The record gives the reactivity of an RNA of 177 nucleotides to 2A3. The reactions ran in a buffer of 150 mM KOAc, 10 mM MgCl2 and 150 mM bicine (pH 8.5), at 24 C. For 2A3, 480 sequencing reads were counted. As a SHAPE reagent, 2A3 marks flexible, mostly unpaired nucleotides at the ribose 2'-OH.
RNA sequence: GGGAACGACUCGAGUAGAGUCGAAAAUACAGAAUAAAAUGUCUAAUGCUGCUUCCACAAAUAUUUGAGGACUGCUAACACAUUUCCUUCUUCUACUUACUCCACAAGGCUUCUUUUCUUCAAACCAGUUAGUCAGCGUGUUCGCACGCUGACUAACAAAAGAAACAACAACAACAAC
Reactivity to 2A3 in 0.01 (KOAc 150mM, MgCl2 10mM, bicine 150mM(pH8.5), 24C), signal-to-noise 2, nucleotides 027 to 126: u100a020c080a010g170a000a010u120a100a150a020a060u090g000u040c030u110a130a000u230g060c000u000g080c060u050u000c040c000a120c080a000a000a050u240a120u140u040u000g130a090g020g020a010c040u040g010c000u020a050a080c000a000c000a110u020u020u020c000c020u070u000c000u090u000c000u000a020c020u050u110a150c050u050c010c020a040c000a100a000g030g020c000u040u060c000u020u030u000u020c010u000u000c020a000a140a300c050c020a040